RNA sequence: GGGAACGACUCGAGUAGAGUCGAAAAGCCAGUAGUGGGUGAGCCUUGUGGAGCUGAGUCUGCUGUUACAUGGUUUGUGUUUGAGUGGAUUGGGUCAUAGUCCAUGUGGCGAUUCUCGAUCAGCUCAGGACGAAGUAUGCUUCGGCGUACUUCGUCCAAAAGAAACAACAACAACAAC
Reactivity to DMS in 0.01 (KOAc 150mM, MgCl2 10mM, bicine 150mM(pH8.5), 24C), signal-to-noise 3, nucleotides 027 to 126: g000c000c010a080g000u010a020g010u000g000g010g000u000g010a060g000c050c050u010u030g010u000g030g000a080g010c020u000g010a090g010u000c010u010g010c040u010g000u010u020a060c110a040u010g000g020u000u000u000g020u010g000u000u000u010g010a020g020u000g000g010a080u010u010g000g000g020u010c060a060u020a130g010u000c010c000a090u020g030u020g000g000c020g010a100u020u000c000u000c040g010a050u000c010a140g010c000u000c020a130
Reactivity to 2A3 in 0.01 (KOAc 150mM, MgCl2 10mM, bicine 150mM(pH8.5), 24C), signal-to-noise 3, nucleotides 027 to 126: g050c000c010a020g040u110a010g070u090g060g020g000u070g000a050g080c010c000u040u070g010u030g030g020a070g010c030u020g010a000g030u010c000u000g010c040u070g090u070u020a020c010a080u040g110g050u030u100u040g020u010g010u000u110u100g040a040g020u110g030g040a040u020u060g050g010g000u060c080a110u060a020g000u000c010c080a090u120g160u120g030g000c000g000a050u090u030c010u020c040g030a030u000c000a000g010c000u020c020a000